[RMDB]
RNA sequence: GGGAACGACUCGAGUAGAGUCGAAAAGAUAUGGAUUGAGGCAACAGCCCACGGUUCGGAAACGAACCUGGGACAUGCCUCUGUCCUAAGUCAAACAAGGCGUGUCAGUUCGCUGACACGCCUUGAAGUAGAUAGGUAUCUUCGGAUACCUAUCUACAAAAGAAACAACAACAACAAC
Reactivity to 2A3 in 0.01 (KOAc 150mM, MgCl2 10mM, bicine 150mM(pH8.5), 24C), signal-to-noise 2, nucleotides 027 to 126: g000a020u040a030u080g000g000a000u010u040g010a010g000g000c010a050a060c090a300g100c020c010c010a060c190g020g000u010u000c000g000g050a040a020a020c010g000a000a000c000c000u010g000g000g050a050c040a020u010g000c000c000u000c000u000g000u000c010c010u010a040a020g040u000c020a020a090a120c000a000a060g020g000c000g000u000g000u030c010a020g010u060u240c240g030c230u000g000a000c030a000c000g020c000c010u000u000g000a010a010
Reactivity to DMS in 0.01 (KOAc 150mM, MgCl2 10mM, bicine 150mM(pH8.5), 24C), signal-to-noise 3, nucleotides 027 to 126: g000a010u000a230u010g020g000a010u000u010g000a020g010g020c000a020a110c300a170g000c000c000c000a010c190g010g000u000u000c000g010g010a080a050a130c000g010a000a010c000c000u010g000g010g000a050c130a130u000g010c010c000u000c000u000g010u000c000c000u000a020a140g000u000c020a140a110a290c010a000a000g010g020c000g000u000g020u000c000a020g000u000u030c220g000c010u000g000a020c000a000c000g010c000c000u000u000g000a020a080

The record gives the reactivity of an RNA of 177 nucleotides to 2A3 and DMS. 2A3 adducts were read by reverse transcription with SuperScript II with manganese. For DMS, 3,827 sequencing reads were counted. Conditions: 150 mM KOAc, 10 mM MgCl2 and 150 mM bicine (pH 8.5), 24 C.